This 177-nucleotide RNA was probed chemically with 2A3 and DMS. For 2A3 the reverse transcriptase was SuperScript II with manganese. Reactivities are given for positions 27 through 126. Source: RMDB library TTRDEL, as collected in RNAgym.
RNA sequence: GGGAACGACUCGAGUAGAGUCGAAAAGAUAUGGAUCGGUGGACUUUUGACGCGGGAUCGGAAACGAUCCCUGUGGCGAUAAGUCUUACCGAUCCUAAGUCAAAAUCGCUUAGUUCGCUAAGCGAAAGAGAUUUCCUUAGUUCGCUAAGGAAAUCUCAAAAGAAACAACAACAACAAC
Reactivity to 2A3 in 0.01 (KOAc 150mM, MgCl2 10mM, bicine 150mM(pH8.5), 24C), signal-to-noise 2, nucleotides 027 to 126: g000a000u030a010u120g010g000a010u020c010g000g030u020g000g000a000c000u030u060u090u190g030a020c010g020c010g030g010g000a010u010c000g000g020a040a080a000c000g000a010u010c000c000c010u040g000u020g010g020c010g030a040u040a300a020g020u000c010u030u110a010c000c000g000a000u000c010c000u000a010a000g010u020c010a000a020a020a270u060c010g000c010u000u010a020g020u050u080c280g000c180u000a010a000g010c000g030a010a050a010
Reactivity to DMS in 0.01 (KOAc 150mM, MgCl2 10mM, bicine 150mM(pH8.5), 24C), signal-to-noise 2, nucleotides 027 to 126: g000a030u010a300u000g000g010a000u000c000g020g000u000g000g000a020c010u000u000u010u000g010a030c000g020c020g000g000g000a010u000c000g010g000a070a030a210c010g000a010u000c000c010c000u000g050u000g010g000c000g010a040u010a000a030g010u000c000u000u040a040c000c000g000a000u000c000c000u000a000a060g000u000c030a080a070a110a140u010c000g000c020u000u000a000g000u000u020c200g010c000u010a000a010g000c020g010a010a050a060